This 207-nucleotide RNA was probed chemically with DMS and 2A3. 2A3 adducts were read by reverse transcription with SuperScript II with manganese. For DMS, 4,327 sequencing reads were counted. It was measured as part of the RMDB library ARCHII.
RNA sequence: GGGAACGACUCGAGUAGAGUCGAAAAUGGCCUCCUGCCGGGUACCUUGGCAUGGGGCGAGAUCCAAGGGUGCUGGCCUUCCUUGCAGCGUGCGACUGCGCGGCGUGGAAGGUGAGAUCCAAAACAGACCGCUAAACAUGUAGAUCUGCCCGAAGAAGUUGUAUAUGUGGUUCGCCACAUAUACAACAAAAGAAACAACAACAACAAC
Reactivity to DMS in 0.01 (KOAc 150mM, MgCl2 10mM, bicine 150mM(pH8.5), 24C), signal-to-noise 2, nucleotides 027 to 156: u020g020g030c030c010u010c020c050u040g020c030c000g040g040g010u000a060c130c010u020u000g020g030c050a050u010g010g000g050g020c030g010a020g000a110u000c020c040a080a300g000g000g020u000g030c040u000g010g000c000c000u010u010c000c010u000u000g030c030a050g000c010g030u000g020c070g060a220c300u000g000c010g000c040g020g040c000g040u000g020g010a020a010g010g010u010g010a060g010a070u020c030c040a020a040a090a140c040a050g000a060c000c000g050c060u000a090a160a160c130a110u000g010u000a050g000a040u000c020u000g010c000c040c040g000a120a120g030a150a180
Reactivity to 2A3 in 0.01 (KOAc 150mM, MgCl2 10mM, bicine 150mM(pH8.5), 24C), signal-to-noise 5, nucleotides 027 to 156: u060g120g000c000c000u020c000c000u000g010c000c010g010g030g100u270a250c060c030u110u260g020g000c010a020u020g010g000g010g010c000g010a010g000a010u030c030c030a030a050g050g000g000u100g060c010u020g050g000c000c000u010u000c000c000u020u250g010c010a030g020c040g000u040g060c110g190a200c150u260g000c000g010c000g020g000c010g010u010g000g000a000a000g010g000u000g000a010g000a040u110c070c020a050a030a000a020c010a000g010a010c000c010g010c080u070a030a090a080c080a090u100g070u110a020g010a030u000c020u040g010c000c000c010g040a080a050g050a090a000